[RMDB]
RNA sequence: GGGAACGACUCGAGUAGAGUCGAAAAGAUAUGGAAGAGUCUCUUUCACGUUGAAAUCGGAAACGAUGGAGUGACAGAGAGCUCUUCCUAAGUCAAAGGAAAGCAGGAGUUCGCUCCUGCUUUCCAACAGAUAGUUCGUCUUCGGACGAACUAUCUGAAAAGAAACAACAACAACAAC
Reactivity to DMS in 0.01 (KOAc 150mM, MgCl2 10mM, bicine 150mM(pH8.5), 24C), signal-to-noise 1, nucleotides 027 to 126: g010a050u000a300u000g010g000a010a010g020a020g010u000c000u000c000u000u020u000c000a010c010g010u000u010g000a060a140a010u000c000g010g010a160a120a220c000g020a020u000g060g000a050g030u000g000a020c050a030g000a000g010a040g000c000u000c000u000u010c000c000u010a010a100g000u000c020a080a140a160g000g000a000a000a010g020c010a000g010g010a030g020u000u010c280g000c010u000c000c000u000g000c000u000u000u000c000c000a060a100
Structure probing data (DMS) for a 177-nucleotide construct. DMS adducts were read by reverse transcription with MarathonRT. High DMS reactivity at an A or C suggests that its Watson-Crick edge is free. The RNA was probed in 150 mM KOAc, 10 mM MgCl2 and 150 mM bicine (pH 8.5) at 24 C.